The data come from the RNA Mapping Database (RMDB), library M2RFPK. The record gives the reactivity of an RNA of 207 nucleotides to 2A3. The RNA was probed in 150 mM KOAc, 10 mM MgCl2 and 150 mM bicine (pH 8.5) at 24 C.

RNA sequence: GGGAACGACUCGAGUAGAGUCGAAAAGGACUGCGCAGUCCGGCAACAUCAGCAGAGAGCCCGCUAUACGUGACGGAUUGGCUGAAGUGUACAGAAAUAUUGAGCCUCCUGCAAGAGGCAGCCAAGCAAAACGUACGUGAGUUCGCUCACGUACGAACUCUCUAGUUCGCUUCGGCGAACUAGAGAGAAAAGAAACAACAACAACAAC
Reactivity to 2A3 in 0.01 (KOAc 150mM, MgCl2 10mM, bicine 150mM(pH8.5), 24C), signal-to-noise 1, nucleotides 027 to 156: g010g010a010c030u040g000c080g040c130a020g020u010c000c000g000g000c000a060a020c000a060u120c010a000g100c080a000g080a010g010a000g110c000c080c010g000c020u100a040u020a150c170g020u030g030a030c050g010g000a060u040u070g020g010c000u020g060a100a040g030u020g040u110a100c100a060g110a070a120a020u300a040u080u150g090a020g000c000c010u000c000c010u050g120c000a030a030g000a010g060g000c010a000g000c030c000a030a000g010c010a000a070a030a090c010g010u020a010c010g000u030g010a000g010u030u210c220g010c050u000c000a010c000g000u000a000c000g010a000a010